[RMDB]
RNA sequence: GGGAACGACUCGAGUAGAGUCGAAAAGAGAACCUGUAGACCUGUUCCGCGACACACACACACACACAAUUUACAGGUUCUUAGGUGAACAAAAGUGAGUGAGUGAGUGUCAAACAACAACAACAAGGGGAUUUACAAACUUCGGUUUGUAAAUCCCAAAAGAAACAACAACAACAAC
Reactivity to 2A3 in 0.01 (KOAc 150mM, MgCl2 10mM, bicine 150mM(pH8.5), 24C), signal-to-noise 1, nucleotides 027 to 126: g100a000g000a000a000c060c000u020g010u030a030g020a050c000c000u020g050u020u110c000c070g010c080g030a000c040a000c000a000c000a020c000a000c010a000c020a000c070a000c030a010a090u010u040u150a100c100a010g000g100u010u000c000u000u010a070g000g010u180g050a030a000c000a040a050a020a050g030u030g090a000g000u000g020a000g000u010g000a090g020u000g000u000c000a000a090a000c040a010a010c000a040a000c010a000a080c030a090a110g010

An RNA of 177 nucleotides, treated with 2A3 and read out base by base. As a SHAPE reagent, 2A3 marks flexible, mostly unpaired nucleotides at the ribose 2'-OH. Source: RMDB library OK1LIB, as collected in RNAgym. The reactions ran in a buffer of 150 mM KOAc, 10 mM MgCl2 and 150 mM bicine (pH 8.5), at 24 C.